[RMDB]
RNA sequence: GGGAACGACUCGAGUAGAGUCGAAAAUGUAUCAGUACACUUAAUUGCUAUGCUGUGUAAGUAGGCAAAAUAAUGAAAAUUUCCUGGUUCAUUUUAAUUCCAGGUAGUUUUUCUUUAUUAAGUAGCAUCCUGAGUUAUCGGAACCAAUGAGAAAGCACGUCAUCAUACGUUUCGACGUAUGAUGACGAAAAGAAACAACAACAACAAC
Reactivity to 2A3 in 0.01 (KOAc 150mM, MgCl2 10mM, bicine 150mM(pH8.5), 24C), signal-to-noise 1, nucleotides 027 to 156: u160g030u000a080u090c060a050g020u020a030c010a010c100u050u130a060a130u180u030g020c010u010a110u300g020c060u010g030u070g100u260a150a060g080u020a010g020g000c000a070a030a000a030u050a030a030u020g020a000a000a000a000u020u020u000c000c000u030g020g020u040u080c010a080u100u300u290u260a180a030u120u070c010c000a000g000g010u010a020g010u000u050u030u020u080c000u120u090u050a070u010u050a080a000g030u030a010g000c030a070u050c010c030u010g020a030g060u000u150a070u260c010g030g040a020a110c000c040a090a070u110g020a000g040a100a000a000g100c100a000